[RMDB]
RNA sequence: GGGAACGACUCGAGUAGAGUCGAAAACGUCGACACCGCAAGCGUGCCCGCCGAGACGCUGCGGCGCGGAAUCGGCUAUGUGAUCCAGGGGCACGGGCUCUUUCCGCACUGGACGGUCGCGCGCAAACCUAUAGGGAGCAUUCGUGCUCCCUAUAGGAAAAGAAACAACAACAACAAC
Reactivity to DMS in 0.01 (KOAc 150mM, MgCl2 10mM, bicine 150mM(pH8.5), 24C), signal-to-noise 4, nucleotides 027 to 126: c060g000u000c050g040a120c110a130c030c030g010c090a080a120g010c040g030u010g020c010c010c030g020c060c050g000a120g000a110c050g030c020u010g020c040g000g010c070g000c020g010g010a060a090u000c070g000g010c020u000a050u010g010u010g000a120u000c080c080a050g010g000g000g010c030a020c030g000g010g000c070u010c060u000u000u020c030c020g010c020a100c090u010g010g000a070c090g000g010u000c050g010c040g010c080g020c100a080a080a160
Reactivity to 2A3 in 0.01 (KOAc 150mM, MgCl2 10mM, bicine 150mM(pH8.5), 24C), signal-to-noise 2, nucleotides 027 to 126: c030g060u040c010g030a030c030a030c090c000g010c070a070a030g030c010g030u040g070c000c020c000g000c030c020g090a060g000a040c010g010c060u080g030c030g040g030c020g010c000g030g010a050a050u040c020g010g000c020u080a160u290g100u050g020a080u020c050c040a060g000g000g040g020c010a010c020g010g050g000c020u040c020u040u060u030c030c010g000c020a050c070u060g030g000a020c000g040g030u030c030g000c010g000c000g000c030a030a050a060
The record gives the reactivity of an RNA of 177 nucleotides to DMS and 2A3. DMS adducts were read by reverse transcription with MarathonRT. The reactions ran in a buffer of 150 mM KOAc, 10 mM MgCl2 and 150 mM bicine (pH 8.5), at 24 C. For 2A3, 3,040 sequencing reads were counted.